[RMDB]
RNA sequence: GGGAACGACUCGAGUAGAGUCGAAAAUUGCGUAGUGGACAGCUGGGGCCUAUGCGAAAGCUGGGCCUCACGGUCCAUAAUGUGGCAGGCACAGCGUGAGGCUGGCUUCACAGAGCAGCGACAACUGCCCGCUUCCAACGGUGGAAGGAUAACGGGCCGGUAUAGAUAGGUUCGCCUAUCUAUACCGAAAAGAAACAACAACAACAAC
Reactivity to DMS in 0.01 (KOAc 150mM, MgCl2 10mM, bicine 150mM(pH8.5), 24C), signal-to-noise 1, nucleotides 027 to 156: u000u000g020c010g030u000a120g040u000g010g000a060c030a060g020c120u000g040g000g030g020c010c010u010a020u010g040c020g000a060a060a200g040c000u020g040g020g020c000c000u010c020a000c000g040g050u030c020c020a000u010a020a030u000g020u000g060g000c080a060g010g050c010a080c050a080g020c030g070u010g000a080g040g020c000u010g000g000c090u000u000c020a050c110a100g010a070g000c000a130g000c030g020a120c060a090a120c050u000g020c050c000c010g030c010u000u030c020c000a010a250c130g020g000u030g070g040a170a300g000g000a040u000a000a060c020g010g030g040c000

Notes:
Source: RMDB library ARCHII, as collected in RNAgym. This 207-nucleotide RNA was probed chemically with DMS. Conditions: 150 mM KOAc, 10 mM MgCl2 and 150 mM bicine (pH 8.5), 24 C.